RNA sequence: GGGAACGACUCGAGUAGAGUCGAAAAGGCAGGACUUACCAAGUCUGGGAGCCGAUGAGGGUUGGCUCAAAGUAGGGUUUUGACUUGAAAACUCAAGCUGUGACCCCAAAACGAUGGAGGUAAAUGAAAAAUCCAUCUGCCUUCGGGCAGAUGGAAAGUUCCAGUACUUGUUCGCAAGUACUGGAACAAAAGAAACAACAACAACAAC
Reactivity to 2A3 in 0.01 (KOAc 150mM, MgCl2 10mM, bicine 150mM(pH8.5), 24C), signal-to-noise 2, nucleotides 027 to 156: g050g010c020a000g030g030a040c010u040u050a080c060c050a070a000g060u020c090u020g090g090g020a020g020c010c040g020a010u060g050a060g030g030g020u050u060g010g000c020u040c080a100a060a000g050u080a060g070g020g010u030u030u150u060g040a070c020u030u050g010a060a000a150a090c070u020c020a030a000g000c020u040g090u150g100a040c000c000c000c020a060a090a040a010c050g030a040u040g040g060a040g030g030u070a030a120a130u150g110a030a090a010a020a000u000c000c000a000u000c020u000g000c000c000u030u020c040g060g030g000c000a000g000a000u010g000g000a000a000a000

This 207-nucleotide RNA was probed chemically with 2A3.
Values cover nucleotides 27 to 156.
The reactions ran in a buffer of 150 mM KOAc, 10 mM MgCl2 and 150 mM bicine (pH 8.5), at 24 C.
For 2A3 the reverse transcriptase was SuperScript II with manganese.
It was measured as part of the RMDB library M2RFPK.
For 2A3, 1,054 sequencing reads were counted.